[RMDB]
Background: Source: RMDB library OK1LIB, as collected in RNAgym. Structure probing data (2A3 and DMS) for a 177-nucleotide construct. For 2A3 the reverse transcriptase was SuperScript II with manganese. The RNA was probed in 150 mM KOAc, 10 mM MgCl2 and 150 mM bicine (pH 8.5) at 24 C. The DMS profile rests on 1,482 reads.
RNA sequence: GGGAACGACUCGAGUAGAGUCGAAAAAAUUCAGCACAAAAGUUCUUUGAAGCAGAUGAACAUUGGGGUACGGAAUUUGCCAAGCUUUACUAUAAUAUUGAGGGAUAGGUGCAUGACAUGACAAAAGGACCAUUAGAUGCUUCGGCAUCUAAUGGUCAAAAGAAACAACAACAACAAC
Reactivity to 2A3 in 0.01 (KOAc 150mM, MgCl2 10mM, bicine 150mM(pH8.5), 24C), signal-to-noise 1, nucleotides 027 to 126: a010a000u090u040c080a030g120c140a010c060a040a000a070a000g080u060u010c000u000u250u000g110a020a090g000c000a000g000a250u000g040a090a020c000a050u030u100g280g000g000g000u100a070c110g110g020a000a080u150u000u060g060c000c000a090a090g040c000u180u180u000a000c000u040a090u060a130a000u050a040u020u130g020a010g000g000g030a000u000a030g000g000u030g000c030a000u020g000a000c000a110u010g030a000c040a050a070a000a050g230
Reactivity to DMS in 0.01 (KOAc 150mM, MgCl2 10mM, bicine 150mM(pH8.5), 24C), signal-to-noise 1, nucleotides 027 to 126: a030a090u000u000c080a040g000c110a120c100a040a070a070a000g050u000u010c050u000u020u010g010a000a100g050c050a060g010a070u030g000a070a030c110a100u000u000g000g030g000g060u010a070c040g000g000a030a060u000u030u000g000c020c010a020a050g000c010u050u030u000a050c050u000a000u000a130a070u030a090u000u030g000a000g010g010g000a110u030a010g000g010u000g000c060a020u030g010a010c150a150u050g000a050c110a020a000a110a180g000